RNA sequence: GGGAACGACUCGAGUAGAGUCGAAAAUGUGUGUGUGUGUGCGCCUGUUACCAUCCCUAACAGAGAUGCUGGGCUGUCAAAUAACCCCCUCCAGGAGACAGUCUCUACCGUACUGGAUUUAGCUGGACAGGGGAAGUCUAUUCGUAGACUUCCCCUGAAAAGAAACAACAACAACAAC
Reactivity to DMS in 0.01 (KOAc 150mM, MgCl2 10mM, bicine 150mM(pH8.5), 24C), signal-to-noise 2, nucleotides 027 to 126: u020g020u000g020u000g000u010g020u020g020u040g000u010g000c080g020c040c020u000g010u010u000a090c110c110a150u000c020c030c060u000a080a080c080a040g010a110g000a060u020g010c080u000g010g080g030c020u000g020u000c040a120a130a110u050a110a300c010c000c000c000c010u010c030c030a060g000g000a260g010a080c170a050g010u000c020u000c040u000a030c070c050g010u000a070c040u000g000g000a110u030u010u010a060g000c060u000g010g000a300